[RMDB]
About this RNA
The data come from the RNA Mapping Database (RMDB), library ARCHII. Chemical mapping of a 207-nucleotide RNA with 2A3. The reactions ran in a buffer of 150 mM KOAc, 10 mM MgCl2 and 150 mM bicine (pH 8.5), at 24 C.

RNA sequence: GGGAACGACUCGAGUAGAGUCGAAAAGCCGGGCGCGGUGGCGCGUGCCUGUAGUCCCAGCUACUCGGGAGGCUGAGGCUGGAGGAUCGCUUGAGUCCAGGAGUUCUGGGCUGUAGUGCGCUAUGCCGAUCGGGUGUCCGCACUAAGUUCGGCAUCACUGCCUGUAUCUGUUCGCAGAUACAGGCAGAAAAGAAACAACAACAACAAC
Reactivity to 2A3 in 0.01 (KOAc 150mM, MgCl2 10mM, bicine 150mM(pH8.5), 24C), signal-to-noise 1, nucleotides 027 to 156: g030c040c000g020g010g000c010g000c010g020g040u000g020g000c010g000c020g000u030g000c010c000u000g050u040a010g050u070c010c000c000a010g000c150u280a160c020u020c040g000g020g000a020g030g020c040u020g040a000g010g010c040u050g020g090a070g010g090a150u140c040g010c040u040u060g230a000g000u010c010c010a040g060g000a060g080u160u080c010u030g000g000g000c000u040g040u050a010g020u010g000c010g040c070u040a030u070g030c010c010g070a130u060c040g000g000g050u090g000u000c030c140g080c020a000c040u020a160a000g070u040u000c010g010g000c000a020u070c050a010
Source information
The 2A3 profile rests on 648 reads.